[RMDB]
RNA sequence: GGGAACGACUCGAGUAGAGUCGAAAAACUCGCGUCCAUACGUGGACGCGAGACCCAGUGUCAUUUUUGUGGUUUGCAGCUAGUACUCUGGCUCCAGUUGCAUAGUCACAAAAAUGAGCAUUGGCAAUGAUUCCUAUUCCUUCGGGAAUAGGAAUCAAAAAGAAACAACAACAACAAC
Reactivity to 2A3 in 0.01 (KOAc 150mM, MgCl2 10mM, bicine 150mM(pH8.5), 24C), signal-to-noise 4, nucleotides 027 to 126: a010c010u010c010g020c010g010u000c020c000a020u030a080c260g110u040g000g000a000c000g000c010g000a000g010a000c000c000c000a000g010u000g030u010c000a000u000u000u000u010u000g010u000g020g000u030u000u010g010c000a000g010c010u030a060g030u080a130c050u080c110u260g160g000c040u020c050c020a000g000u000u010g020c000a010u070a160g050u030c000a000c000a000a000a000a000a000u000g000a010g010c010a010u000u010g040g000c060a070a080
Reactivity to DMS in 0.01 (KOAc 150mM, MgCl2 10mM, bicine 150mM(pH8.5), 24C), signal-to-noise 2, nucleotides 027 to 126: a140c000u000c000g000c010g100u000c000c000a090u010a120c290g040u000g020g000a000c000g020c010g000a000g000a030c210c020c000a060g000u010g000u000c000a000u000u060u000u000u000g040u000g010g000u000u000u000g000c000a000g000c000u010a130g020u020a070c140u000c110u030g020g010c100u000c120c090a010g010u000u000g010c000a020u040a000g000u000c020a000c040a010a040a010a000a010u000g000a060g010c000a000u000u000g000g010c280a140a120
Source information:
Structure probing data (2A3 and DMS) for a 177-nucleotide construct. For DMS, 2,727 sequencing reads were counted. DMS adducts were read by reverse transcription with MarathonRT. High 2A3 reactivity points to a flexible backbone, as in loops and unpaired stretches. The 2A3 profile rests on 3,333 reads.